The record gives the reactivity of an RNA of 177 nucleotides to 2A3 and DMS. 2A3 adducts were read by reverse transcription with SuperScript II with manganese. Conditions: 150 mM KOAc, 10 mM MgCl2 and 150 mM bicine (pH 8.5), 24 C. Values cover nucleotides 27 to 126.
RNA sequence: GGGAACGACUCGAGUAGAGUCGAAAAUACAUCCGGCAGCGCUCAGGUAAGGCAAACCACGGUUUGGAGGGUGGUUCUCGGCUGAGACCGCCGCGAGCUCUAUCUCCGGUCCAAAAUAAAAAUUUAAACGAAAUAACUUAUUCGUAAGUUAUUUCGUAAAAGAAACAACAACAACAAC
Reactivity to 2A3 in 0.01 (KOAc 150mM, MgCl2 10mM, bicine 150mM(pH8.5), 24C), signal-to-noise 3, nucleotides 027 to 126: u120a010c030a040u030c010c020g010g000c020a030g040c030g000c050u030c040a050g160g030u100a100a030g090g000c030a050a030a020c010c020a040c110g060g080u040u110u110g140g070a080g010g080g030u030g030g000u080u010c010u000c010g130g000c070u090g010a010g000a040c000c030g000c000c000g030c020g000a010g000c010u000c010u050a150u050c030u000c020c000g030g020u010c010c010a030a080a060a050u230a050a090a050a010a030u140u260u240a120a100
Reactivity to DMS in 0.01 (KOAc 150mM, MgCl2 10mM, bicine 150mM(pH8.5), 24C), signal-to-noise 4, nucleotides 027 to 126: u010a100c130a100u000c010c010g010g020c200a060g010c150g000c030u010c020a040g000g010u020a060a070g010g010c050a040a040a040c020c020a080c170g020g000u010u010u000g000g020a090g010g010g010u000g020g010u010u010c020u000c020g000g000c140u000g000a040g010a030c060c050g030c010c010g000c090g020a040g000c010u000c040u000a070u010c100u000c020c020g010g000u000c020c060a040a040a060a090u020a020a080a080a080a150u020u000u010a060a060